The record gives the reactivity of an RNA of 207 nucleotides to 2A3 and DMS. The RNA was probed in 150 mM KOAc, 10 mM MgCl2 and 150 mM bicine (pH 8.5) at 24 C. The DMS profile rests on 5,108 reads. 2A3 adducts were read by reverse transcription with SuperScript II with manganese.
[RMDB]
RNA sequence: GGGAACGACUCGAGUAGAGUCGAAAACCUUCAUGGGGCUGUUUCCAGCUCGUCCACAAGCUCAUCGAUUUUCUUUAGUAGAUUACCGGUGUAAAUACCCAGUGUGCUUAUGAGUCAGUUAGUAGACGUCUUCAUUCAUUGGAGUAACUGGUUUAGAGAUUAAAUGGAGUUUCGACUCCAUUUAAUCAAAAGAAACAACAACAACAAC
Reactivity to 2A3 in 0.01 (KOAc 150mM, MgCl2 10mM, bicine 150mM(pH8.5), 24C), signal-to-noise 4, nucleotides 027 to 156: c010c000u090u120c120a140u110g030g000g000g020c020u030g020u100u250u070c100c000a000g020c020u020c030g060u060c060c020a090c030a080a030g030c060u040c080a050u070c050g090a110u030u050u120u000c050u080u210u170a140g070u070a030g030a070u030u030a050c010c020g000g000u020g010u040a140a210a050u090a050c010c020c010a020g020u030g010u040g090c020u050u090a030u100g010a010g000u000c040a020g010u060u160a060g020u080a070g070a080c050g060u040c010u090u020c090a090u140u080c020a040u020u090g020g000a070g030u010a030a040c020u020g060g000u050u030u090a100g020a000
Reactivity to DMS in 0.01 (KOAc 150mM, MgCl2 10mM, bicine 150mM(pH8.5), 24C), signal-to-noise 2, nucleotides 027 to 156: c020c020u010u000c080a070u010g000g060g030g060c010u010g030u000u010u010c010c030a080g000c030u000c060g020u000c000c030a080c040a070a100g030c040u000c000a050u000c020g000a050u000u000u000u000c010u000u010u000a220g020u020a060g010a040u000u000a020c020c000g030g020u000g020u010a050a070a130u000a070c070c010c030a100g010u000g020u000g000c040u000u040a060u010g020a120g020u000c020a050g060u000u000a110g040u020a110g000a060c080g010u000c030u000u010c030a050u000u000c050a130u000u000g010g000a120g040u000a040a080c050u010g010g020u000u000u000a130g000a300